Chemical mapping of a 177-nucleotide RNA with 2A3 and DMS. The 2A3 profile rests on 2,071 reads. Conditions: 150 mM KOAc, 10 mM MgCl2 and 150 mM bicine (pH 8.5), 24 C.
RNA sequence: GGGAACGACUCGAGUAGAGUCGAAAAGGCACCGACGCGGGUGCCGUUUACCCGCGGGCUGCACGAAGUCGCCGACCGGGUAUGGGCGUGGACGCUGCCCGACGGGGGAUACGGCUUCAGCAACGCCCAGCGCGAUAAAUUUCGAUUUAUCGCGCUGAAAAGAAACAACAACAACAAC
Reactivity to 2A3 in 0.01 (KOAc 150mM, MgCl2 10mM, bicine 150mM(pH8.5), 24C), signal-to-noise 2, nucleotides 027 to 126: g010g020c010a000c020c010g210a150c220g100c160g150g020g000u010g020c000c010g000u000u010u030a110c000c000c010g000c030g010g020g000c010u010g000c090a020c170g060a060a050g040u080c020g000c120c000g080a200c030c110g150g000g050u130a140u210g180g030g000c020g030u110g090g020a050c090g000c050u040g010c030c000c020g000a060c010g020g000g010g000g020a010u050a240c030g000g000c000u070u010c020a020g010c010a080a060c050g000c030c010
Reactivity to DMS in 0.01 (KOAc 150mM, MgCl2 10mM, bicine 150mM(pH8.5), 24C), signal-to-noise 3, nucleotides 027 to 126: g020g010c010a030c010c020g000a130c250g020c100g020g010g010u010g000c020c000g000u000u000u000a100c000c020c000g020c120g010g000g020c010u020g030c060a100c100g010a120a090g020u010c010g000c030c010g000a150c070c050g000g000g020u010a060u010g010g000g010c000g000u000g000g000a160c100g000c040u000g000c010c000c000g020a060c020g000g000g020g000g000a110u030a220c030g000g000c010u010u000c010a080g000c020a070a140c150g010c010c010